This 177-nucleotide RNA was probed chemically with DMS. The data come from the RNA Mapping Database (RMDB), library TTRDEL. For DMS, 882 sequencing reads were counted. The RNA was probed in 150 mM KOAc, 10 mM MgCl2 and 150 mM bicine (pH 8.5) at 24 C.
RNA sequence: GGGAACGACUCGAGUAGAGUCGAAAAGAUAUGGAUCACGGGAGACGUGCCUCGGAAACGAGGCAUACGUCGACGAUCGUGCGUCCUAAGUCAAAUCAUUCGUGGACCUUCGGGUCCACGAAUGAAACGCAAAAGUGAACUUCGGUUCACUUUUGCGAAAAGAAACAACAACAACAAC
Reactivity to DMS in 0.01 (KOAc 150mM, MgCl2 10mM, bicine 150mM(pH8.5), 24C), signal-to-noise 1, nucleotides 027 to 126: g000a030u000a300u000g000g010a000u000c010a010c010g000g000g000a070g000a030c000g010u000g000c000c000u010c000g010g030a080a040a210c010g000a000g000g000c000a010u010a000c020g010u010c010g000a080c250g000a070u010c000g020u000g000c300g030u000c000c000u000a060a150g000u010c040a140a130a140u010c010a000u000u000c000g050u000g000g000a040c010c000u000u000c300g040g000g000u000c000c000a000c020g000a000a000u010g030a010a070a090